[RMDB]
RNA sequence: GGGAACGACUCGAGUAGAGUCGAAAAUGUCGUUUUAGUUGGUGGAUGCGGCGAUUGUGCCAACGCGUUGCAAUGCGGACAAAUCGUGAAGAGGAGGAAAUAGGCCGGUUUUUCCAAGAUCGAUUCCUAGCAGGGUAGGAUUCGUCCUACCCUGCUAAAAAGAAACAACAACAACAAC
Reactivity to DMS in 0.01 (KOAc 150mM, MgCl2 10mM, bicine 150mM(pH8.5), 24C), signal-to-noise 1, nucleotides 027 to 126: u000g030u030c070g000u000u000u000u000a080g010u010u010g000g030u010g020g030a150u000g020c150g020g020c030g000a080u000u000g020u010g040c040c040a070a130c050g000c050g000u000u000g000c130a120a130u020g020c030g000g000a050c080a030a040a050u000c020g000u000g030a060a120g000a060g010g000a100g000g000a010a060a060u020a060g000g000c080c000g030g000u000u000u000u010u000c030c030a060a090g000a080u000c090g000a130u000u000c020c040